[RMDB]
RNA sequence: GGGAACGACUCGAGUAGAGUCGAAAAGACUCUUUCAAAGGGAUAGUUGAAGGAGAUUGCUUCUCGAACUAUCCAUCUGCACGAUUCGAGAAGCAUGGUUGCCAAAUCGUGCAGUUAUUGGCAACAGACUCAAAAUUAGCUUCGGCUAAUUUUGAGUAAAAGAAACAACAACAACAAC
Reactivity to DMS in 0.01 (KOAc 150mM, MgCl2 10mM, bicine 150mM(pH8.5), 24C), signal-to-noise 3, nucleotides 027 to 126: g000a170c010u000c010u000u000u000c010a020a050a150g040g010g000a070u010a020g000u000u000g010a020a030g010g010a020g010a220u000u010g020c100u000u000c000u000c030g000a050a130c170u000a060u000c020c040a080u000c010u000g000c010a030c010g010a070u000u000c050g000a070g010a070a100g000c100a040u010g010g020u000u000g000c000c010a080a050a070u000c030g010u000g000c030a030g000u000u000a040u010u000g000g000c040a010a010c020a130g000
Reactivity to 2A3 in 0.01 (KOAc 150mM, MgCl2 10mM, bicine 150mM(pH8.5), 24C), signal-to-noise 2, nucleotides 027 to 126: g040a010c010u020c000u000u040u010c060a080a040a000g190g030g040a100u120a070g070u000u020g050a060a020g010g020a060g040a100u060u160g080c040u020u020c010u000c000g030a080a050c030u030a070u080c040c010a000u040c010u040g020c030a010c040g090a050u090u080c090g050a030g030a100a010g010c030a020u110g070g020u010u020g000c000c000a000a040a000u040c040g020u020g000c020a000g000u010u050a110u040u050g020g010c010a020a000c020a050g010